An RNA of 177 nucleotides, treated with 2A3 and DMS and read out base by base. DMS adducts were read by reverse transcription with MarathonRT. The DMS profile rests on 2,740 reads. It was measured as part of the RMDB library OK2TRN. DMS (dimethyl sulfate) methylates the pairing face of unpaired adenines and cytosines.
RNA sequence: GGGAACGACUCGAGUAGAGUCGAAAACGGGCGUGGUGAAUGUCACCACCACCGGGUGCGCCACCCCCACCACGGCACCAUUAGCCGGCGACACCGACGCAACGCCUGGGAUCGGUUGGAGUGGCGGGGGGUAUACUACUUUCGAGUAGUAUACCCCAAAAGAAACAACAACAACAAC
Reactivity to 2A3 in 0.01 (KOAc 150mM, MgCl2 10mM, bicine 150mM(pH8.5), 24C), signal-to-noise 3, nucleotides 027 to 126: c000g000g020g020c050g010u010g010g020u020g050a300a230u300g130u230c000a010c010c000a010c010c000a020c000c000g060g000g070u130g020c020g000c000c000a010c010c000c000c000c010a020c000c000a040c060g020g000c020a030c060c000a090u080u110a030g040c000c000g000g030c050g030a020c030a030c100c020g050a040c020g010c060a120a060c050g050c040c020u060g010g030g070a100u090c070g000g050u030u050g010g040a110g020u000g000g000c040g020g030
Reactivity to DMS in 0.01 (KOAc 150mM, MgCl2 10mM, bicine 150mM(pH8.5), 24C), signal-to-noise 4, nucleotides 027 to 126: c020g020g020g010c300g020u000g000g020u010g010a250a120u010g020u000c010a020c000c010a030c010c080a170c010c000g020g000g000u010g000c040g000c020c020a110c010c010c010c020c060a060c050c070a060c070g030g000c000a100c130c130a140u010u010a170g010c010c010g020g030c030g020a120c200a190c030c010g000a040c020g000c090a080a090c100g020c040c030u010g020g010g000a080u000c110g010g000u000u000g020g000a150g010u000g000g010c000g020g000